[RMDB]
RNA sequence: GGGAACGACUCGAGUAGAGUCGAAAAGGUAGCAGAGAAGAGACUAGACUUCAGACUAGAUAGUAUCACACUACGGGUACAUAGUAGAGACAUACAUAGAUGGGUAUGACACAUCAGAGCUGCCAUGGACCUACGUGAUGUUCGCAUCACGUAGGUCAAAAGAAACAACAACAACAAC
Reactivity to DMS in 0.01 (KOAc 150mM, MgCl2 10mM, bicine 150mM(pH8.5), 24C), signal-to-noise 2, nucleotides 027 to 126: g030g010u000a110g010c000a040g000a120g010a060a090g000a120g030a130c140u010a080g000a160c120u000u000c040a110g020a060c050u000a020g000a140u010a050g010u000a120u000c100a080c020a090c070u000a020c120g000g000g000u000a010c130a080u020a070g010u000a020g000a070g010a090c050a080u000a010c050a090u000a070g010a060u000g010g000g000u010a020u010g010a110c120a010c050a070u010c040a100g030a110g000c020u000g020c020c000a120u010g000
Reactivity to 2A3 in 0.01 (KOAc 150mM, MgCl2 10mM, bicine 150mM(pH8.5), 24C), signal-to-noise 2, nucleotides 027 to 126: g010g000u030a000g010c030a000g060a010g000a180a020g040a020g050a050c020u020a030g060a070c000u070u030c120a110g060a130c010u030a030g040a100u100a050g020u000a060u030c000a010c010a010c160u190a060c150g010g000g000u050a030c030a060u060a030g030u010a020g060a000g010a090c000a030u030a020c010a000u130a020g110a090u060g050g110g000u060a060u100g040a050c020a000c000a070u000c020a010g020a020g100c000u000g010c000c030a020u090g090